[RMDB]
An RNA of 207 nucleotides, treated with 2A3 and DMS and read out base by base. For DMS, 1,934 sequencing reads were counted. The data come from the RNA Mapping Database (RMDB), library OK3TST. Conditions: 150 mM KOAc, 10 mM MgCl2 and 150 mM bicine (pH 8.5), 24 C.

RNA sequence: GGGAACGACUCGAGUAGAGUCGAAAAAUUAGCCUGCAGUUGGGCAAAAUCAUCUAGUAACACAGUACACUGUAGAGUGUGGAUUGUCUACCCUUGUGAUCAAAGUGAUGACUGGGAGCUGCUGCUCAAUGCCACCACCUAGCAUGAUGAGAAGGUACAGCGCUAUAUUGUUCGCAAUAUAGCGCUGAAAAGAAACAACAACAACAAC
Reactivity to 2A3 in 0.01 (KOAc 150mM, MgCl2 10mM, bicine 150mM(pH8.5), 24C), signal-to-noise 2, nucleotides 027 to 156: a000u050u050a010g000c000c030u110g000c050a080g050u120u060g040g000g000c040a030a050a060a030u070c000a010u030c030u050a070g030u100a080a060c090a000c010a100g200u270a030c080a090c050u080g050u140a010g060a070g090u160g000u030g030g030a080u020u030g040u000c040u050a090c000c000c000u030u150g030u010g000a010u040c040a220a240a060g100u120g100a010u030g010a040c020u020g060g000g060a080g030c030u120g040c110u020g020c010u070c010a010a040u170g060c010c020a010c000c000a010c000c000u010a040g030c070a070u050g040a060u040g010a080g080a120a050g030g100u120a050
Reactivity to DMS in 0.01 (KOAc 150mM, MgCl2 10mM, bicine 150mM(pH8.5), 24C), signal-to-noise 1, nucleotides 027 to 156: a140u000u000a220g050c000c010u000g030c000a240g010u030u010g030g000g030c010a070a140a040a060u000c100a050u000c060u010a040g010u000a100a200c100a070c030a040g010u010a080c010a060c060u000g030u010a110g020a110g010u000g060u000g020g020a100u000u000g030u000c010u000a080c030c010c040u040u000g030u010g020a070u010c040a030a040a070g000u000g010a060u000g000a040c010u010g010g000g000a100g020c010u000g070c030u020g010c040u000c010a100a100u000g010c020c030a050c000c010a030c030c020u000a150g020c060a050u000g060a070u000g010a070g000a120a060g070g000u000a240